[RMDB]
RNA sequence: GGGAACGACUCGAGUAGAGUCGAAAAGAUAUGGACUUCCGACGCUUGGAUUUAUAGACAUUUUCGGAAACGAACCAUCUAUUGUCAGCGUUUGAAGUCCUAAGUCAAAGCUCUCUUCGGAGAGCAACAGUACUGAAUCCUUCGGGAUUCAGUACUGAAAAGAAACAACAACAACAAC
Reactivity to DMS in 0.01 (KOAc 150mM, MgCl2 10mM, bicine 150mM(pH8.5), 24C), signal-to-noise 1, nucleotides 027 to 126: g000a030u020a300u000g020g000a010c030u000u000c010c040g010a000c020g010c000u010u000g030g000a030u000u000u000a010u010a010g000a070c160a210u020u000u020u020c000g000g000a080a070a230c000g010a020a000c300c300a190u000c000u000a020u000u000g000u000c010a020g000c040g000u000u010u000g000a080a010g010u000c060c010u000a010a030g000u030c070a080a250a190g050c000u000c000u000c000u010u000c120g060g000a100g000a000g010c000a010a050
Reactivity to 2A3 in 0.01 (KOAc 150mM, MgCl2 10mM, bicine 150mM(pH8.5), 24C), signal-to-noise 1, nucleotides 027 to 126: g000a000u010a080u180g020g000a010c000u000u000c020c020g030a000c000g000c050u160u190g300g010a070u300u300u150a030u060a000g010a010c030a100u080u120u040u100c050g000g030a050a080a050c040g000a000a000c030c010a060u000c010u030a010u040u000g020u040c000a000g000c000g000u000u040u030g000a000a000g000u000c000c000u000a010a020g000u000c000a000a240a000g030c010u000c000u000c000u000u040c200g060g010a000g010a000g000c020a000a000

Structure probing data (DMS and 2A3) for a 177-nucleotide construct. The reactions ran in a buffer of 150 mM KOAc, 10 mM MgCl2 and 150 mM bicine (pH 8.5), at 24 C. DMS adducts were read by reverse transcription with MarathonRT.